[RMDB]
RNA sequence: GGGAACGACUCGAGUAGAGUCGAAAAGUUGCGAUCUUAAACAAGAACUUGUCUAUGAACUAAAAGCCAUUGCUUUAAAAGGGGACGUUAAUCAUGUCAUCAUAGAAGCGACAGGCAUUGCGCAUCCUCUCUGGGUACAGUUCGCUGUACCCAGAGAAAAAGAAACAACAACAACAAC
Reactivity to DMS in 0.01 (KOAc 150mM, MgCl2 10mM, bicine 150mM(pH8.5), 24C), signal-to-noise 2, nucleotides 027 to 126: g010u000u000g000c020g010a050u020c050u010u000a010a100a050c110a010a090g000a120a110c180u000u000g000u000c010u030a010u000g000a050a120c110u030a070a010a090a070g000c020c060a270u010u000g000c020u000u000u000a030a060a150a090g020g000g000g010a000c030g000u010u000a030a140u010c300a000u030g000u000c020a060u000c070a050u000a240g010a000a020g030c030g050a010c080a060g000g010c040a050u000u000g020c020g000c070a000u020c030c000
Reactivity to 2A3 in 0.01 (KOAc 150mM, MgCl2 10mM, bicine 150mM(pH8.5), 24C), signal-to-noise 4, nucleotides 027 to 126: g070u070u040g020c020g020a060u040c060u070u130a070a070a040c020a040a050g110a120a110c070u080u060g030u040c020u050a120u080g050a070a080c040u090a060a090a000a040g000c000c010a030u030u200g010c020u090u070u060a090a190a040a000g050g000g000g000a000c020g070u060u170a160a070u180c040a010u100g030u000c000a060u030c000a030u080a120g060a030a000g020c000g030a000c030a120g010g010c030a030u000u120g000c040g020c020a040u030c000c000